Notes: Chemical mapping of a 177-nucleotide RNA with DMS and 2A3. It was measured as part of the RMDB library OK1LIB.

RNA sequence: GGGAACGACUCGAGUAGAGUCGAAAAUGUGACUAAGAUCACUAUUGCAGGUGGUGUGAAGCCUUCCAUAACACACUUUGUGGAUGAGAAGAAAAAGGCAAUGGCGCUUAGUAAGCGAUGCAAGCAAGAGCCAUGUCUUUUUCGAAAGACAUGGCUCAAAAGAAACAACAACAACAAC
Reactivity to DMS in 0.01 (KOAc 150mM, MgCl2 10mM, bicine 150mM(pH8.5), 24C), signal-to-noise 2, nucleotides 027 to 126: u030g030u010g000a030c060u020a090a020g030a130u010c020a060c020u000a030u020u020g000c070a080g000g000u010g050g000u000g040u000g000a100a190g000c030c000u000u080c020c000a080u040a110a180c060a070c050a040c190u010u020u050g000u000g000g000a020u000g000a090g000a060a070g000a010a040a050a060a090g000g000c010a040a060u020g000g020c010g000c040u000u000a060g020u030a180a240g000c010g000a040u020g000c020a060a090g010c170a070a090
Reactivity to 2A3 in 0.01 (KOAc 150mM, MgCl2 10mM, bicine 150mM(pH8.5), 24C), signal-to-noise 3, nucleotides 027 to 126: u130g010u020g000a020c010u130a040a130g020a060u040c000a020c000u120a010u020u030g080c110a080g120g000u030g020g060u090g020u020g100a150a170g070c000c010u010u000c000c000a060u190a300a040c020a050c000a010c130u000u070u230g040u020g050g000a000u130g010a050g090a300a000g020a060a060a000a000a000g100g000c100a050a150u050g090g020c010g020c030u000u000a030g030u070a220a000g000c030g080a070u110g040c100a110a010g010c070a270a020
The DMS profile rests on 2,984 reads. The RNA was probed in 150 mM KOAc, 10 mM MgCl2 and 150 mM bicine (pH 8.5) at 24 C.